[RMDB]
RNA sequence: GGGAACGACUCGAGUAGAGUCGAAAACCGCUUAUCGUGAAGCUGCAGCAUGUCAUCUUGCUAAAGCCUUACAAACAUACAGCGAGACUGGUAGUGAUCUUCUUUACCAACCACCCAACUGUAGCAUAAAGCUCGUACUUCGGUACGAGCAAAAGAAACAACAACAACAAC
Reactivity to 2A3 in 0.01 (KOAc 150mM, MgCl2 10mM, bicine 150mM(pH8.5), 24C), signal-to-noise 7, nucleotides 027 to 129: c000c000g000c120u140u120a160u140c080g030u040g050a030a000g000c010u010g030c040a020g020c000a000u030g040u110c030a140u070c060u050u030g010c010u030a020a010a020g000c010c010u010u040a040c010a010a110a000c040a030u170a020c010a000g000c000g010a040g010a000c030u020g030g000u020a020g020u030g130a160u050c030u160u010c000u010u120u020a040c000c000a040a040c010c030a040c010c010c000a040a040c050u070g050u110a000g050c010a060u090a100a100a000
Reactivity to DMS in 0.01 (KOAc 150mM, MgCl2 10mM, bicine 150mM(pH8.5), 24C), signal-to-noise 4, nucleotides 027 to 129: c080c020g060c100u030u060a060u070c150g070u000g010a000a000g040c000u020g050c220a060g000c020a010u020g030u030c150a230u060c090u070u070g000c040u030a060a210a000g050c040c060u040u000a080c130a140a120a140c110a040u040a070c090a000g030c040g000a100g010a050c000u020g020g050u000a050g030u020g030a120u090c070u000u000c000u020u030u020a070c000c000a010a060c090c030a040c000c000c000a000a000c070u040g010u000a050g010c050a090u040a000a180a170

Conditions: 150 mM KOAc, 10 mM MgCl2 and 150 mM bicine (pH 8.5), 24 C. Structure probing data (2A3 and DMS) for a 170-nucleotide construct. Values cover nucleotides 27 to 129. Source: RMDB library 15KLIB, as collected in RNAgym. The 2A3 profile rests on 11,764 reads.